[RMDB]
RNA sequence: GGGAACGACUCGAGUAGAGUCGAAAAAAAAGAUAUGGAUUCAGAACUACGUGUGAAGUCAGCGUUGACGCUAGUUCGGAAACGAACUAGUAUCAGCUGUCACACACGCUGAAUCCUAAGUCAAAAAGAAUCUGUAUUGGUUCGCCAAUACAGAUUCAAAAGAAACAACAACAACAAC
Reactivity to 2A3 in 0.01 (KOAc 150mM, MgCl2 10mM, bicine 150mM(pH8.5), 24C), signal-to-noise 2, nucleotides 027 to 126: a000a000a010a020g070a040u100a040u130g000g000a000u000u020c000a000g040a240a120c160u240a070c300g000u000g010u010g150a170a110g030u020c000a000g000c070g230u270u300g000a000c000g000c000u000a000g000u000u000c010g010g000a070a050a020c010g000a000a000c000u000a000g010u000a010u010c010a000g010c000u000g000u000c000a020c000a010c010a000c010g000c000u000g000a010a000u000c000c000u000a040a030g040u000c000a010a050a040a010a150
Reactivity to DMS in 0.01 (KOAc 150mM, MgCl2 10mM, bicine 150mM(pH8.5), 24C), signal-to-noise 2, nucleotides 027 to 126: a070a040a090a060g000a050u000a290u020g020g010a000u000u010c000a010g010a120a040c140u010a300c010g000u000g030u000g010a140a130g010u000c000a010g030c000g010u010u000g010a010c030g000c010u000a000g020u000u000c000g010g010a070a040a100c010g010a000a000c000u010a000g020u000a030u000c000a110g020c000u020g000u000c030a270c010a010c030a000c000g000c010u000g010a020a000u010c000c020u000a010a070g000u010c030a100a060a130a120a060

Notes:
Conditions: 150 mM KOAc, 10 mM MgCl2 and 150 mM bicine (pH 8.5), 24 C. The record gives the reactivity of an RNA of 177 nucleotides to 2A3 and DMS. For 2A3, 4,669 sequencing reads were counted. Reactivities are given for positions 27 through 126. DMS adducts were read by reverse transcription with MarathonRT.